[RMDB]
RNA sequence: GGGAACGACUCGAGUAGAGUCGAAAAACAGACUUUGCCCGAAAGCAGCGGUGGCGAAUAUCGCACAACGGACGGAUGCCUGAUGCAGCGAAGCCGCGUGAGGGAUGAAGGAAUCCGGGCUCCGGGCUAUAUUAUUGUUAUUCGUAACAAUAAUAUAAAAAGAAACAACAACAACAAC
Reactivity to DMS in 0.01 (KOAc 150mM, MgCl2 10mM, bicine 150mM(pH8.5), 24C), signal-to-noise 7, nucleotides 027 to 126: a110c110a130g000a110c090u010u020u010g010c010c000c000g000a100a090a050g010c030a160g000c020g000g020u010g010g000c050g000a120a110u040a050u020c020g020c020a110c090a090a110c050g000g000a090c040g010g010a080u010g000c000c020u010g000a100u020g010c040a090g000c030g000a110a100g000c020c020g000c050g030u020g010a120g000g000g000a070u020g010a180a110g000g000a030a100u010c010c020g010g010g000c020u000c170c000g010g000g010c040
Reactivity to 2A3 in 0.01 (KOAc 150mM, MgCl2 10mM, bicine 150mM(pH8.5), 24C), signal-to-noise 5, nucleotides 027 to 126: a010c030a010g180a080c040u100u080u110g020c000c000c000g020a050a040a000g030c040a010g040c000g050g000u040g030g050c030g030a100a050u180a060u180c040g060c020a050c030a110a080c070g030g140a010c050g090g060a080u190g030c000c010u100g030a110u130g010c040a030g020c020g070a070a010g010c010c000g000c010g020u040g030a050g040g060g020a030u030g030a020a040g070g010a020a000u000c000c000g010g020g000c010u020c020c000g010g010g000c010

The record gives the reactivity of an RNA of 177 nucleotides to DMS and 2A3.
Conditions: 150 mM KOAc, 10 mM MgCl2 and 150 mM bicine (pH 8.5), 24 C.
DMS adducts were read by reverse transcription with MarathonRT.
It was measured as part of the RMDB library OK1LIB.
For DMS, 19,064 sequencing reads were counted.
The 2A3 profile rests on 5,764 reads.
2A3 adducts were read by reverse transcription with SuperScript II with manganese.